[RMDB]
RNA sequence: GGGAACGACUCGAGUAGAGUCGAAAACGUCAGCGGACGGCCUCUGAGACGAGCGAUGGACAGUAGAGCUCGUCUCUACCAGUCGCGUGCUGACUCUCACGCCCACCCGCACGGCUGCUCCGAGAGGAGAGCUCUCUGCCGCUAGUCGAGCGGACUCGACUAGCACUGUGUUCGCACAGUGCUAGUCAAAAGAAACAACAACAACAAC
Reactivity to DMS in 0.01 (KOAc 150mM, MgCl2 10mM, bicine 150mM(pH8.5), 24C), signal-to-noise 2, nucleotides 027 to 156: c110g030u000c040a050g040c000g000g000a070c050g000g010c000c030u090c000u010g000a040g020a060c010g000a110g010c010g010a300u000g020g020a160c140a080g020u000a040g050a300g000c030u010c080g000u000c010u000c000u000a000c040c040a070g030u000c020g070c000g010u010g000c050u000g020a060c100u020c030u010c070a120c060g000c020c020c010a150c020c030c000g000c030a140c010g030g000c000u000g010c000u000c000c030g010a190g010a270g000g010a120g000a170g040c010u000c040u010c020u000g050c010c010g040c010u000a090g020u000c050g000a090g030c020g000g010a080c040u020c120
Reactivity to 2A3 in 0.01 (KOAc 150mM, MgCl2 10mM, bicine 150mM(pH8.5), 24C), signal-to-noise 8, nucleotides 027 to 156: c060g010u010c010a010g000c010g090g070a190c010g010g010c000c020u110c130u060g010a000g000a000c000g010a020g010c010g070a130u170g120g120a110c120a150g160u220a050g040a010g040c010u020c030g030u000c010u000c000u000a010c000c030a020g000u000c010g010c040g110u140g010c010u000g000a010c010u000c010u030c020a040c060g080c000c010c010a020c020c010c000g020c000a030c010g000g010c000u040g030c010u030c050c080g010a010g000a010g060g050a150g020a110g180c000u000c000u000c000u040g050c060c030g010c040u070a020g010u050c020g010a000g000c010g020g020a050c030u050c090